Chemical mapping of a 177-nucleotide RNA with 2A3.

[RMDB]
RNA sequence: GGGAACGACUCGAGUAGAGUCGAAAACUGGUACCUGGAUUUUUACCCUUGGUGAUUUCUACCACCUUACUACUGAAGAAGACACCAUUCCAGUGGACCACUGUGACCUAAGAAGCAUUCAGCCAUCUGCUAGACGCUGGUUCGCCAGCGUCUAGCAAAAAGAAACAACAACAACAAC
Reactivity to 2A3 in 0.01 (KOAc 150mM, MgCl2 10mM, bicine 150mM(pH8.5), 24C), signal-to-noise 1, nucleotides 027 to 126: c000u000g000g020u000a000c000c010u020g060g000a190u000u100u130u130u300a060c030c030c000u140u040g050g000u110g000a260u060u000u020c000u040a090c000c150a030c040c090u140u030a100c160u000a000c000u040g060a000a000g100a020a020g130a010c110a000c120c000a000u020u020c000c000a000g090u080g030g080a000c000c000a000c030u100g000u050g130a040c000c000u040a060a170g060a080a110g020c000a000u180u070c050a000g020c020c040a010u000c170